[RMDB]
RNA sequence: GGGAACGACUCGAGUAGAGUCGAAAAACAUCUCACUGGGAAGUGAGAUGUGAGUCCGCAUGGGAAUGCGGACGGUCGAUUUGACAAGAAUCCUAAUUGUCAAGAGGAGAACGAGAUGUACGGGAGUAGAUCGAGUUCUGCUCGCAGAAUAGGCAGCGUGUACUCGUGUAUUCGUACACGAGUGCACAAAAGAAACAACAACAACAAC
Reactivity to DMS in 0.01 (KOAc 150mM, MgCl2 10mM, bicine 150mM(pH8.5), 24C), signal-to-noise 2, nucleotides 027 to 156: a040c000a000u020c000u000c000a030c020u010g020g030g000a300a010g030u000g010a030g000a010u010g010u000g010a160g030u000c000c000g000c000a040u010g030g000g000a300a070u000g000c000g010g000a000c030g010g010u000c020g020a140u010u000u000g000a100c050a040a040g000a010a080u010c000c020u000a050a300u000u000g020u010c030a040a090g000a050g010g010a060g000a020a060c020g020a300g000a050u000g020u010a050c000g020g030g000a290g040u000a070g010a000u000c010g000a300g010u010u000c000u000g000c020u000c020g010c090a050g010a070a100u000a010g010g020c050a100g020c090
Reactivity to 2A3 in 0.01 (KOAc 150mM, MgCl2 10mM, bicine 150mM(pH8.5), 24C), signal-to-noise 3, nucleotides 027 to 156: a000c000a000u000c000u010c000a000c000u030g030g040g070a060a030g000u000g000a000g000a000u000g000u010g000a010g000u000c000c000g000c000a020u000g040g010g100a090a060u020g000c000g000g000a000c000g000g000u050c000g020a110u020u000u070g000a000c000a010a000g000a000a040u000c000c000u000a020a040u010u000g000u000c010a010a020g000a000g050g040a010g000a010a010c010g000a000g000a040u020g040u170a010c020g030g070g040a120g000u010a020g000a030u000c000g000a010g000u000u000c000u000g000c000u000c000g000c030a020g050a070a070u120a080g050g000c040a020g020c030